[RMDB]
RNA sequence: GGGAACGACUCGAGUAGAGUCGAAAAGCACGUCCGGUAAGGCCCGUGCGAACACUUGAGCUCCGGCUUGACCGCUCUUGUGGAUUAGGACGUUCUAGCUCCGGCUUGGCCGCUAGUUCGUCCGAAAGCUGACCCAGUGCUUCGGCACUGGGUCAGCAAAAGAAACAACAACAACAAC
Reactivity to 2A3 in 0.01 (KOAc 150mM, MgCl2 10mM, bicine 150mM(pH8.5), 24C), signal-to-noise 2, nucleotides 027 to 126: g000c010a000c010g020u060c020c030g010g200u120a110a030g000g070c000c010c000g030u000g000c000g010a080a010c050a030c040u020u020g010a010g000c030u020c050c000g040g070c050u230u300g120a300c000c050g000c000u010c000u000u000g000u010g040g020a070u010u140a000g000g000a000c000g000u020u010c000u020a000g000c010u040c300c010g020g020c150u050u290g090g020c070c050g060c040u000a000g000u000u000c000g010u000c000c000g010a000a000a000

Structure probing data (2A3) for a 177-nucleotide construct. High 2A3 reactivity points to a flexible backbone, as in loops and unpaired stretches. Reactivities are given for positions 27 through 126. The reactions ran in a buffer of 150 mM KOAc, 10 mM MgCl2 and 150 mM bicine (pH 8.5), at 24 C.